[RMDB]
RNA sequence: GGGAACGACUCGAGUAGAGUCGAAAACAAUUCGUCAUCCCGAACGGGUCGGACAUCCGUGUGAUCUGGUCGACCGACGGGUUUAUCCGCUUCUAAGGAGCACGCAUGGCACUUCCCGAGAACUGGGUAGACGGUGUUAAUCAGCAGGUUGACGCGGCACAUGCCUUCUUUUCGAAGAAGGCAUGUGAAAAGAAACAACAACAACAAC
Reactivity to DMS in 0.01 (KOAc 150mM, MgCl2 10mM, bicine 150mM(pH8.5), 24C), signal-to-noise 1, nucleotides 027 to 156: c080a110a180u000u000c060g030u000c050a180u020c030c010c000g000a100a140c020g000g000g030u010c030g030g010a060c060a070u010c030c000g080u000g020u000g020a020u000c010u030g030g020u000c200g000a030c150c010g020a060c030g010g070g000u000u000u000a050u030c000c040g010c020u000u000c010u020a170a270g010g010a080g000c010a030c030g020c110a090u000g000g010c100a140c010u000u000c020c000c000g000a150g000a070a080c060u010g010g050g030u000a070g040a060c000g020g030u000g000u000u000a060a040u000c020a100g110c030a060g020g000u000u010g010a060c040g020c050g020g000
Reactivity to 2A3 in 0.01 (KOAc 150mM, MgCl2 10mM, bicine 150mM(pH8.5), 24C), signal-to-noise 3, nucleotides 027 to 156: c010a020a110u210u140c020g020u030c060a100u030c000c020c000g000a050a010c030g040g040g040u020c030g020g030a030c010a030u030c040c030g010u060g030u030g040a050u010c050u030g040g110u060c060g030a020c040c000g060a060c020g030g020g000u000u080u110a060u020c000c030g010c060u070u010c010u070a130a120g050g010a020g040c040a010c080g040c040a080u090g050g040c070a010c110u100u010c010c000c000g000a040g000a050a090c050u080g010g010g010u080a060g020a040c030g040g030u020g030u030u070a120a090u070c050a030g110c020a000g000g040u040u040g070a040c040g020c040g060g010
Chemical mapping of a 207-nucleotide RNA with DMS and 2A3. The 2A3 profile rests on 1,607 reads. DMS adducts were read by reverse transcription with MarathonRT. For 2A3 the reverse transcriptase was SuperScript II with manganese.